This 207-nucleotide RNA was probed chemically with 2A3. The 2A3 profile rests on 347 reads. The reactions ran in a buffer of 150 mM KOAc, 10 mM MgCl2 and 150 mM bicine (pH 8.5), at 24 C.

[RMDB]
RNA sequence: GGGAACGACUCGAGUAGAGUCGAAAAGCUCAUAUGUACAUUAGGCAGGGUCACUCCUAAUUGACUUAACCACAAUGACCCACUUUGGGAGACAGCAUAUUACCUACACAGGGAAAGAUUAGCAAGAGGUGCUGCCUGUGGUCCCUGUCCCACAUAAGCUGAUCGUACGAUUCGUCGUACGAUCAGCAAAAGAAACAACAACAACAAC
Reactivity to 2A3 in 0.01 (KOAc 150mM, MgCl2 10mM, bicine 150mM(pH8.5), 24C), signal-to-noise 1, nucleotides 027 to 156: g030c030u060c150a070u010a100u140g120u030a180c150a190u300u120a000g000g000c010a030g060g000g000u070c020a010c020u030c000c000u050a100a020u000u100g140a080c020u150u150a040a000c000c070a020c000a100a090u050g100a180c020c030c030a070c000u110u080u050g000g000g000a020g010a110c020a000g020c050a000u100a020u220u160a130c000c030u000a000c010a010c040a050g000g070g070a050a080a000g030a120u000u160a000g030c030a070a140g000a150g080g040u130g040c020u010g000c000c000u010g000u000g020g000u050c000c030c030u010g000u010c090c050c000a070c000a030u170a160a050